[RMDB]
An RNA of 170 nucleotides, treated with 2A3 and DMS and read out base by base. Conditions: 150 mM KOAc, 10 mM MgCl2 and 150 mM bicine (pH 8.5), 24 C. Reactivities are given for positions 27 through 129. The DMS profile rests on 8,008 reads.
RNA sequence: GGGAACGACUCGAGUAGAGUCGAAAAGGAUUAUGAACGUAGCAAUAUUUAUGGUACUGCUACUAUUGGUGUAUGUAAGUACACUGAUAUUGAUGUUAAUUCAGCUUUGAAUAUAUGUUUUGACAUACCGCUUGCUCCUUCGGGAGCAAGAAAAGAAACAACAACAACAAC
Reactivity to 2A3 in 0.01 (KOAc 150mM, MgCl2 10mM, bicine 150mM(pH8.5), 24C), signal-to-noise 5, nucleotides 027 to 129: g080g020a000u090u060a050u220g170a140a010c080g010u010a000g010c000a010a040u010a070u010u210u040a190u200g120g010u030a030c030u000g000c000u010a000c010u000a030u010u040g000g000u000g010u000a030u000g200u110a010a180g000u000a000c000a000c000u000g000a000u010a030u020u100g050a070u140g060u090u090a040a010u020u020c020a010g050c050u090u110u190g130a160a030u180a010u010a050u200g030u030u060u000u080g050a020c010a000u060a000c000c000g030
Reactivity to DMS in 0.01 (KOAc 150mM, MgCl2 10mM, bicine 150mM(pH8.5), 24C), signal-to-noise 2, nucleotides 027 to 129: g030g030a000u030u100a070u030g000a140a090c100g020u020a030g030c000a060a000u000a000u050u000u000a100u060g070g080u030a050c130u010g040c000u000a040c010u040a040u000u030g040g120u050g010u010a000u070g010u050a140a150g030u020a000c020a000c000u030g000a030u000a040u020u030g010a070u040g030u070u000a000a000u080u000c120a040g020c150u050u090u010g020a080a050u100a050u050a030u000g030u000u000u000u000g040a070c030a040u030a090c100c000g000